Notes
This 177-nucleotide RNA was probed chemically with DMS and 2A3. For 2A3 the reverse transcriptase was SuperScript II with manganese. It was measured as part of the RMDB library OK2TRN. Reactivities are given for positions 27 through 126.
RNA sequence: GGGAACGACUCGAGUAGAGUCGAAAAUGGACGGCAGCUCCUGUCUCCCCGAAGGCGUUCCGUCGAAUUGGACCAUAUUCUUUGGUGCCGAGGACGUUGACGAGACGUUGCGGGUGAUCUGCGACAACGUGGUGAUGACGUUCGCGUCAUCACCACGAAAAGAAACAACAACAACAAC
Reactivity to DMS in 0.01 (KOAc 150mM, MgCl2 10mM, bicine 150mM(pH8.5), 24C), signal-to-noise 2, nucleotides 027 to 126: u010g010g000a040c070g010g030c090a060g000c160u000c010c040u000g000u000c010u000c010c000c000c020g020a130a230g020g010c000g010u000u000c010c000g000u010c020g050a140a130u000u000g010g040a070c000c000a020u000a100u010u000c230u000u000u010g010g020u010g000c000c010g010a040g000g010a150c270g020u000u010g000a020c030g000a120g020a040c010g010u000u000g000c060g000g000g000u000g000a050u000c040u000g030c030g020a120c170a100a110
Reactivity to 2A3 in 0.01 (KOAc 150mM, MgCl2 10mM, bicine 150mM(pH8.5), 24C), signal-to-noise 2, nucleotides 027 to 126: u060g000g010a010c030g080g030c040a030g000c000u020c000c030u000g020u000c020u040c000c010c000c020g060a150a040g080g020c030g030u110u050c010c000g000u020c030g020a080a100u060u070g020g010a000c000c010a020u040a160u290u120c250u050u080u010g050g000u150g300c010c010g010a040g070g050a040c080g030u070u110g020a020c030g020a030g010a090c010g000u070u060g000c010g000g000g000u060g010a130u000c050u030g040c000g030a070c040a120a070